[RMDB]
RNA sequence: GGGAACGACUCGAGUAGAGUCGAAAAAAACAUACUGACACCGGUUGCUCAACAGGCUGUGUGGGACAAUAGAAUAACAAGGCUGUCAAUUUGAGCUUGACGGCUGCAAACCGAAUGGAGUGAAAUCGUAACCGGACUCACUUCGGUGAGUCCGGAAUCAUAACGUUCACUUCGGUGAACGUUAUGAAAAAGAAACAACAACAACAAC
Reactivity to DMS in 0.01 (KOAc 150mM, MgCl2 10mM, bicine 150mM(pH8.5), 24C), signal-to-noise 1, nucleotides 027 to 156: a070a020a000c040a130u010a060c070u010g000a110c040a040c030c000g010g010u000u000g000c040u000c090a130a060c030a060g000g000c000u010g000u010g010u010g020g010g040a120c090a040a070u000a070g010a140a050u040a080a130c030a050a100g040g000c000u010g010u000c010a020a080u020u000u010g010a090g030c300u000u010g010a060c020g010g040c010u000g060c030a030a100a040c000c030g020a040a140u010g020g000a100g020u020g000a040a060a100u000c100g010u010a070a170c000c000g000g010a020c000u000c010a000c020u010u010c240g060g020u010g000a010g000u000c000c000g010g000a030a020
Reactivity to 2A3 in 0.01 (KOAc 150mM, MgCl2 10mM, bicine 150mM(pH8.5), 24C), signal-to-noise 1, nucleotides 027 to 156: a000a000a040c090a060u170a030c050u050g050a010c050a030c050c000g070g020u040u050g070c030u060c090a000a010c000a080g060g020c030u030g020u020g010u000g060g030g050a020c000a080a090u090a060g160a120a040u220a120a010c050a060a000g050g000c000u020g010u020c030a000a020u140u020u250g020a000g040c010u000u020g000a000c000g010g000c000u000g040c090a120a150a020c070c050g080a050a010u100g040g020a000g070u050g070a050a080a050u160c060g010u010a070a030c000c000g000g010a000c000u000c000a000c000u020u090c130g080g030u000g000a000g000u000c000c000g000g000a000a000
Conditions: 150 mM KOAc, 10 mM MgCl2 and 150 mM bicine (pH 8.5), 24 C. The record gives the reactivity of an RNA of 207 nucleotides to DMS and 2A3.